[RMDB]
RNA sequence: GGGAACGACUCGAGUAGAGUCGAAAAUUGCGCUCGCCUAUUUAGGCAUACUUCUCAGGAUGGCGCGUUGCAGUCCAACAAGAUCCAGGGACUGUACAGAAUUUUCCUAUACCUCGAGUCGGGUUUGAAAACGUUAGGCACUUCGGUGCCUAACGAACUCACUUUAGGUCUUCGGACCUAAAGUGAGAAAAGAAACAACAACAACAAC
Reactivity to 2A3 in 0.01 (KOAc 150mM, MgCl2 10mM, bicine 150mM(pH8.5), 24C), signal-to-noise 1, nucleotides 027 to 156: u000u050g000c000g010c000u060c050g010c000c000u130a260u130u140u280a000g010g020c010a040u090a150c070u140u100c100u050c170a060g120g000a230u170g040g000c050g000c040g020u060u050g040c010a000g020u020c030c000a050a050c080a200a150g170a250u100c130c080a020g040g000g000a000c000u000g020u000a030c000a020g210a030a000u000u020u000u000c000c010u020a020u030a060c060c070u020c000g000a010g000u000c000g000g000g000u040u060u080g100a080a020a000a000c000g020u000u010a000g000g000c010a000c000u010u010c190g050g010u000g000c020c000u000a000a000c010g000a000a000